An RNA of 177 nucleotides, treated with 2A3 and DMS and read out base by base.
[RMDB]
RNA sequence: GGGAACGACUCGAGUAGAGUCGAAAAUCUAAGAGCGUAACACACACUCAGACUGUACGACAGUCUGACACACACAAACGCUAGUGUAUCGUGUGUGUGAUAUCGAUGUAGCACGAAAAUGAAAGAACGUUUUUUUUCAAUUCGUUGAAAAAAAACGAAAAGAAACAACAACAACAAC
Reactivity to 2A3 in 0.01 (KOAc 150mM, MgCl2 10mM, bicine 150mM(pH8.5), 24C), signal-to-noise 4, nucleotides 027 to 126: u060c050u060a120a020g040a000g060c010g050u060a040a000c010a000c000a000c000a000c050u020c010a000g000a010c000u010g030u130a150c150g200a090c190a010g000u000c000u010g010a000c000a000c000a010c000a000c020a050a290a030c120g050c120u050a080g010u020g030u070a060u130c070g000u020g000u020g010u000g000u020g000a030u040a030u080c040g030a020u100g050u100a020g070c070a020c140g070a070a060a040a080u190g070a120a080a070g070a080a040
Reactivity to DMS in 0.01 (KOAc 150mM, MgCl2 10mM, bicine 150mM(pH8.5), 24C), signal-to-noise 5, nucleotides 027 to 126: u000c020u000a110a140g010a080g030c160g000u010a120a030c010a030c000a020c020a020c050u010c020a000g000a020c000u000g010u000a120c300g020a200c010a010g010u010c000u000g000a040c200a050c070a010c030a030c060a070a090a070c080g000c120u000a050g020u010g010u000a060u000c160g020u000g020u000g010u000g010u000g000a080u010a070u000c040g000a080u000g000u000a070g010c060a070c050g010a040a040a070a080u000g000a040a090a100g000a060a140
For DMS the reverse transcriptase was MarathonRT.
Values are in units of 0.01, from 0 to 300, in steps of 10.
2A3 adducts were read by reverse transcription with SuperScript II with manganese.
The reactions ran in a buffer of 150 mM KOAc, 10 mM MgCl2 and 150 mM bicine (pH 8.5), at 24 C.